Conditions: 150 mM KOAc, 10 mM MgCl2 and 150 mM bicine (pH 8.5), 24 C. The record gives the reactivity of an RNA of 170 nucleotides to DMS and 2A3.
[RMDB]
RNA sequence: GGGAACGACUCGAGUAGAGUCGAAAAAUCAGCCACCGGAGAGGGACGCGAUGGUAAGAGUGGAGGAAAGUUCGGAGGGAAAUCCCAAGAAGGUCAUUCGAGAUUCAAGAGGUGAGGAGGGAUCCCCAUACUCAGUGCUUCGGCACUGAGAAAAGAAACAACAACAACAAC
Reactivity to DMS in 0.01 (KOAc 150mM, MgCl2 10mM, bicine 150mM(pH8.5), 24C), signal-to-noise 5, nucleotides 027 to 129: a000u050c080a140g010c000c000a080c000c050g030g010a090g040a060g020g010g030a050c190g010c090g040a080u020g010g030u070a070a050g040a030g030u040g040g000a030g010g040a030a070a060g020u000u000c000g080g020a060g000g000g000a050a090a120u000c000c060c030a130a060g010a050a050g000g000u030c050a120u110u020c070g020a070g010a100u040u020c110a090a090g020a040g030g000u040g020a040g000g050a050g000g000g000a080u010c020c000c020c070a000u030a070
Reactivity to 2A3 in 0.01 (KOAc 150mM, MgCl2 10mM, bicine 150mM(pH8.5), 24C), signal-to-noise 4, nucleotides 027 to 129: a000u060c050a020g050c000c000a020c020c000g010g020a030g010a010g010g030g010a050c040g020c050g080a040u080g020g020u020a060a030g020a030g040u090g040g000a000g010g020a080a030a010g050u090u030c020g010g000a030g010g010g000a030a020a050u080c030c000c000a000a030g050a020a010g030g020u030c020a040u050u050c040g020a010g020a050u080u040c050a050a020g010a010g030g030u070g000a010g010g010a000g000g000g000a020u020c000c000c000c000a030u060a050
Annotation
For DMS the reverse transcriptase was MarathonRT.